An RNA of 207 nucleotides, treated with DMS and 2A3 and read out base by base. DMS adducts were read by reverse transcription with MarathonRT. Conditions: 150 mM KOAc, 10 mM MgCl2 and 150 mM bicine (pH 8.5), 24 C. 2A3 adducts were read by reverse transcription with SuperScript II with manganese. For 2A3, 2,503 sequencing reads were counted.
RNA sequence: GGGAACGACUCGAGUAGAGUCGAAAAAUUAGGUUCGCCUAAUAGUAAACCUUUGUGUACUUGCGCUGUUGUCAGCCUAUGGGAUCCCAUUGGGAUCCCUAAGGGCUUGGAUUUACAGCGGAAGUACACUCUGGUGUCUCUAGAGAUUCGUCUCUAACUAUCUAAGGUUCUUCGGAACCUUAGAUAGAAAAGAAACAACAACAACAAC
Reactivity to DMS in 0.01 (KOAc 150mM, MgCl2 10mM, bicine 150mM(pH8.5), 24C), signal-to-noise 2, nucleotides 027 to 156: a040u000u010a020g010g030u010u000c270g050c030c000u040a030a020u010a070g000u010a070a030a050c000c010u000u010u000g010u000g000u000a010c000u010u000g020c030g030c000u000g010u000u000g010u010c020a090g020c010c000u010a300u000g020g010g010a030u000c000c000c000a300u030u010g140g070g020a020u000c000c000c010u000a010a100g020g000g000c000u000u020g040g000a070u000u000u000a010c010a000g030c030g000g000a020a010g040u000a010c010a000c000u000c040u000g010g010u000g010u010c020u010c030u000a080g010a110g000a150u000u000c040g000u010c010u000c010u010a070a300
Reactivity to 2A3 in 0.01 (KOAc 150mM, MgCl2 10mM, bicine 150mM(pH8.5), 24C), signal-to-noise 3, nucleotides 027 to 156: a000u000u000a010g010g020u020u050c170g090c030c000u010a000a030u010a030g170u080a080a090a090c010c000u020u020u010g000u000g000u000a000c000u000u020g300c000g000c010u010g000u000u000g010u010c020a010g000c000c000u010a040u080g000g000g000a000u000c030c000c040a110u200u300g020g000g000a000u000c050c000c000u000a010a080g010g030g010c010u020u050g090g000a030u300u240u110a000c000a000g000c000g000g020a010a000g000u010a000c000a000c000u000c010u000g000g010u030g050u040c010u000c020u050a020g000a010g000a060u060u040c090g090u000c050u010c010u040a080a080